[RMDB]
RNA sequence: GGGAACGACUCGAGUAGAGUCGAAAAAGAAAGGAGACAGGUGGAAGAAAAAGGGGUGGGCCCCCCGAUCCGAGGGGCCCGACGCCCGGAUCUGGAGAGCACUCCCGGCCGUAUGGUCGAGUGUCCCGCAACACUGUGUUCGCACAGUGUAAAAGAAACAACAACAACAAC
Reactivity to 2A3 in 0.01 (KOAc 150mM, MgCl2 10mM, bicine 150mM(pH8.5), 24C), signal-to-noise 9, nucleotides 027 to 129: a000g060a010a020a000g030g020a030g010a020c040a030g040g040u050g040g040a090a050g040a070a120a020a020a020g030g000g000g010u090g010g020g000c000c000c000c000c000c000g040a100u040c050c050g020a030g000g010g010g000c000c010c000g010a020c020g040c020c010c000g000g000a010u010c020u040g010g010a030g000a010g030c010a010c030u030c030c020c000g010g000c030c010g140u220a150u300g040g020u030c010g000a010g010u040g020u000c000c010c010g010c030a030
Reactivity to DMS in 0.01 (KOAc 150mM, MgCl2 10mM, bicine 150mM(pH8.5), 24C), signal-to-noise 9, nucleotides 027 to 129: a080g020a050a050a040g010g010a040g000a030c100a030g000g000u010g010g010a110a050g010a040a050a070a230a090g030g020g000g050u020g000g010g000c000c000c010c010c010c030g010a100u020c220c050g010a060g020g010g010g040c030c010c000g010a030c060g020c080c010c000g000g000a070u020c020u020g000g000a060g000a080g020c120a080c070u010c050c080c050g000g000c010c030g000u050a070u070g020g010u000c030g000a060g020u000g000u010c000c000c000g000c160a090